[RMDB]
RNA sequence: GGGAACGACUCGAGUAGAGUCGAAAAGAUAUGGACUCCCCACCGUCUGUAGGACUAUACUUUCGGAAACGAAAGUACGAAUCCUAUUGACGAGGUCCUAAGUCAAAGUCAACCUUCGGGUUGACAACUAUAACAAUUUCUUCGGAAAUUGUUAUAGAAAAGAAACAACAACAACAAC
Reactivity to 2A3 in 0.01 (KOAc 150mM, MgCl2 10mM, bicine 150mM(pH8.5), 24C), signal-to-noise 4, nucleotides 027 to 126: g020a030u130a120u220g000g030a010c020u160c090c020c000c000a010c010c010g000u010c010u000g020u010a010g010g000a000c010u040a020u010a070c000u010u000u010c010g020g010a020a100a070c000g010a010a010a020g010u000a000c060g100a030a190u010c000c000u000a000u020u020g010a000c020g000a010g040g000u000c010c010u050a230a050g050u060c080a200a060a010g000u000c000a000a010c010c020u060u110c300g120g000g010u000u000g000a010c010a000a010
Reactivity to DMS in 0.01 (KOAc 150mM, MgCl2 10mM, bicine 150mM(pH8.5), 24C), signal-to-noise 5, nucleotides 027 to 126: g000a060u010a200u010g000g010a030c010u000c110c010c020c040a300c110c000g010u000c010u000g000u000a000g000g000a020c030u010a260u000a000c000u000u000u000c000g000g010a100a070a230c000g000a020a000a000g010u000a000c060g020a080a120u000c000c010u000a010u000u000g000a020c010g000a110g020g010u000c000c000u000a090a150g010u000c070a110a090a140g010u000c000a010a010c000c000u000u010c220g040g000g000u000u000g000a000c000a020a080
An RNA of 177 nucleotides, treated with 2A3 and DMS and read out base by base. 2A3 adducts were read by reverse transcription with SuperScript II with manganese. Source: RMDB library TTRDEL, as collected in RNAgym.